[RMDB]
This 207-nucleotide RNA was probed chemically with DMS and 2A3. The data come from the RNA Mapping Database (RMDB), library M2RFPK. As a SHAPE reagent, 2A3 marks flexible, mostly unpaired nucleotides at the ribose 2'-OH. Values cover nucleotides 27 to 156. 2A3 adducts were read by reverse transcription with SuperScript II with manganese. Reactivities are rounded to 0.1 and cut off at 0 and 3.
RNA sequence: GGGAACGACUCGAGUAGAGUCGAAAAAAAAGAUUUCUGAGACAAACACGCUUCACAAUGUGCGGCAAAGAAACAUUGUUUAUGCAAAGGCACAUCGCAAUGUGUGCUCAAACAUUGCUUAUUCAAAAAAAGAUUUUAGACUUCGGUCUAAAAUCAACAGUAAUAUCUCCUUCGGGAGAUAUUACUGAAAAGAAACAACAACAACAAC
Reactivity to DMS in 0.01 (KOAc 150mM, MgCl2 10mM, bicine 150mM(pH8.5), 24C), signal-to-noise 1, nucleotides 027 to 156: a010a030a040a090g000a270u000u000u000c000u000g000a260g000a170c030a120a150a150c090a000c070g010c030u000u000c040a030c000a030a020u000g020u000g010c000g020g000c040a080a140a040g060a060a000a020c000a060u010u000g010u000u000u010a080u010g000c030a050a220a060g000g000c030a030c000a010u010c130g000c180a130a080u000g040u000g000u000g020c030u000c050a060a200a040c010a040u000u000g000c030u000u010a160u010u000c020a000a000a130a090a110a130a160g000a010u000u000u000u000a020g000a010c020u000u000c300g080g000u000c000u010a010a000a000a000u000c010a000a080
Reactivity to 2A3 in 0.01 (KOAc 150mM, MgCl2 10mM, bicine 150mM(pH8.5), 24C), signal-to-noise 3, nucleotides 027 to 156: a000a000a000a020g130a040u130u120u040c080u140g100a110g030a100c060a060a180a020c050a040c060g000c000u030u000c010a010c000a020a020u010g000u010g010c000g030g000c040a080a140a090g040a000a050a000c000a000u000u020g050u030u080u110a100u070g040c020a060a050a110g060g000c000a000c000a030u060c100g070c140a050a070u090g010u010g010u020g000c040u040c080a040a120a010c030a040u020u040g010c010u130u150a100u250u180c100a090a110a020a020a010a010a010g000a000u000u000u020u010a000g000a000c010u030u020c260g060g010u000c000u010a000a000a000a010u000c000a000a000
Background:
For 2A3, 1,759 sequencing reads were counted.